[RMDB]
Structure probing data (2A3) for a 207-nucleotide construct.
2A3 adducts were read by reverse transcription with SuperScript II with manganese.
RNA sequence: GGGAACGACUCGAGUAGAGUCGAAAAAGCAGUUAUAUCGAAAAACGAUAUAACUGCAAAUAGGAUGGGGUGUGAUAGGUGGCACGGAGAAUUUUGGAUUCUCAGGGAUGGGUUCGAUUCUCAUAGUCCUAAAAGCAGUGUGUCAUCACGCACUGCACACUACCCGUCGGUUCGCCGACGGGUAGUGAAAAGAAACAACAACAACAAC
Reactivity to 2A3 in 0.01 (KOAc 150mM, MgCl2 10mM, bicine 150mM(pH8.5), 24C), signal-to-noise 1, nucleotides 027 to 156: a000g000c000a000g000u000u000a000u000a000u020c030g090a060a040a060a120a190c000g000a000u000a000u000a000a000c000u000g010c000a000a000a000u080a010g000g000a010u030g000g000g020g000u090g010u030g060a100u060a120g130g010u040g030g040c030a010c040g090g000a030g040a030a030u170u230u240u220g130g040a010u010u020c040u020c040a010g050g030g090a070u050g000g000g000u030u030c020g030a120u080u010c010u000c020a030u050a080g050u070c020c010u090a050a080a000a000g000c000a000g000u000g000u000g010u070c040a030u160c030a040c000g000c000a000c000u030g000c000a000

It was measured as part of the RMDB library OK3TST. For 2A3, 700 sequencing reads were counted.